[RMDB]
RNA sequence: GGGAACGACUCGAGUAGAGUCGAAAAGGUUUUGCCGAGAGGAUACGGUAUAGCCAUACUUAUCCAGCGAGAAGACCUUAUGAUCCAGAUACUGACUGCAGUAGGAUUCAUUGGUCUUGGUCGCACAUGGUGCAUGACUCUUCGGAGUCAUGCACCAAAAAGAAACAACAACAACAAC
Reactivity to DMS in 0.01 (KOAc 150mM, MgCl2 10mM, bicine 150mM(pH8.5), 24C), signal-to-noise 1, nucleotides 027 to 126: g000g010u000u000u000u000g010c000c000g030a200g000a180g000g000a160u000a040c070g020g070u010a030u000a070g030c070c030a120u010a050c130u000u000a130u000c030c070a150g010c010g050a020g000a070a020g010a030c000c000u000u000a010u000g000a000u000c000c000a190g020a300u000a080c000u000g030a290c180u020g020c050a020g020u010a050g000g000a000u000u000c010a050u030u000g010g000u000c000u000u010g000g000u010c010g030c020a130c230a070
Reactivity to 2A3 in 0.01 (KOAc 150mM, MgCl2 10mM, bicine 150mM(pH8.5), 24C), signal-to-noise 1, nucleotides 027 to 126: g050g010u090u030u070u110g010c030c030g030a070g040a120g300g090a090u170a270c070g050g000u010a020u100a000g080c010c010a020u050a030c000u060u050a070u060c020c020a030g000c010g020a030g050a030a000g000a030c000c000u090u030a040u070g000a000u000c000c010a030g090a240u090a030c000u090g210a090c230u300g000c030a010g000u020a000g000g000a020u300u160c010a000u070u050g000g000u000c030u030u030g000g100u000c020g030c010a000c020a140
Structure probing data (DMS and 2A3) for a 177-nucleotide construct.
Values cover nucleotides 27 to 126.
For DMS, 660 sequencing reads were counted.
Conditions: 150 mM KOAc, 10 mM MgCl2 and 150 mM bicine (pH 8.5), 24 C.